[RMDB]
RNA sequence: GGGAACGACUCGAGUAGAGUCGAAAAACUGCCAUACGUGGCAGAAACACGCCUUACCAGGACUAAACAGCGUGUCUAAAAAACAGUCCCUCAUACCUGAUCUGGAGGGUAGAUCAGGAAUACUAAAAAAAUCGGGUGAAGUUCGCUUCACCCGAAAGCUUUAGUGUACCUUCGGGUACACUAAAGCAAAAGAAACAACAACAACAAC
Reactivity to 2A3 in 0.01 (KOAc 150mM, MgCl2 10mM, bicine 150mM(pH8.5), 24C), signal-to-noise 2, nucleotides 027 to 156: a000c000u010g020c040c000a000u040a090c180g060u000g000g000c000a000g020a000a020a000c000a000c010g000c010c020u020u050a040c050c060a040g000g030a000c010u080a120a020a060c000a010g000c000g020u000g050u010c070u060a040a040a000a000a000a000c050a020g000u010c000c010c000u050c020a110u100a120c000c000u000g000a010u000c000u010g060g060a080g090g070g060u050a000g000a000u010c000a000g010g040a000a010u100a080c070u130a070a050a000a060a000a000a090u020c020g020g000g010u000g000a000a000g030u090u130c160g040c090u020u000c010a010c000c000c010g000a010a000a000